Source: RMDB libraries RFM100 and RFMREP, as collected in RNAgym. An RNA of 177 nucleotides, treated with DMS and 2A3 and read out base by base. Values are in units of 0.01, from 0 to 300, in steps of 10. The reactions ran in a buffer of 150 mM KOAc, 10 mM MgCl2 and 150 mM bicine (pH 8.5), at 24 C. For 2A3, 3,679 sequencing reads were counted. Reactivities are given for positions 27 through 126. For 2A3 the reverse transcriptase was SuperScript II with manganese.

RNA sequence: GGGAACGACUCGAGUAGAGUCGAAAACGCGAGCGAAGCACCGAAGCCAAGCCCCGGUAAACGGCGGCCGUAACUAUAACGGUCCUAAGGUAGCGAAAUUCCUUGUCGGGUAAGUUCCGACCUGCACUAUUAUGUGCCCAUUCGUGGGCACAUAAUAAAAAGAAACAACAACAACAAC
Reactivity to DMS in 0.01 (KOAc 150mM, MgCl2 10mM, bicine 150mM(pH8.5), 24C), signal-to-noise 5, nucleotides 027 to 126: c060g000c040g020a140g010c010g000a170a070g020c170a030c010c010g010a070a050g020c030c010a140a210g010c030c000c010c000g010g000u020a070a120a140c050g000g000c100g020g000c010c000g010u020a120a270c090u010a080u020a110a090c020g000g010u000c140c040u020a080a180g000g010u000a110g000c020g000a020a050a120u000u000c000c000u000u050g010u010c020g000g000g000u000a070a090g000u020u020c010c000g000a020c010c050u010g000c090a170c180
Reactivity to 2A3 in 0.01 (KOAc 150mM, MgCl2 10mM, bicine 150mM(pH8.5), 24C), signal-to-noise 4, nucleotides 027 to 126: c030g010c010g020a060g080c010g020a050a000g010c020a010c000c000g040a080a010g010c010c000a030a020g000c000c010c000c000g010g040u170a180a160a010c020g030g000c090g020g000c030c000g030u050a060a010c030u020a020u060a300a040c010g000g010u040c000c020u040a070a040g010g000u020a010g020c000g050a060a040a040u040u010c010c000u040u070g010u000c000g000g010g020u080a130a070g050u060u050c000c020g010a010c000c020u120g020c040a040c040